[RMDB]
RNA sequence: GGGAACGACUCGAGUAGAGUCGAAAACAGCACAGGAGAAACUACACGUUCUAUGCACUAGCGUACACCAGUUUCCUUUCAUGCUUCAUUUAAACGGCUGUGUAUGAUAUGCAACAAAACAACCUACCGCAUGCGUGAUCUUCGGAUCACGCAUGCGAAAAGAAACAACAACAACAAC
Reactivity to 2A3 in 0.01 (KOAc 150mM, MgCl2 10mM, bicine 150mM(pH8.5), 24C), signal-to-noise 1, nucleotides 027 to 126: c000a020g040c000a000c000a130g000g030a000g090a090a060a000c050u120a070c100a000c100g000u010u000c050u170a000u190g000c000a000c000u000a000g030c000g080u130a120c060a010c010c000a000g000u000u000u150c000c000u130u170u050c060a070u040g060c000u060u080c020a060u000u220u260a090a150a050c000g030g030c020u000g090u070g000u050a000u010g020a020u030a020u060g040c000a090a120c000a000a040a000a020c010a120a040c030c070u090a100c080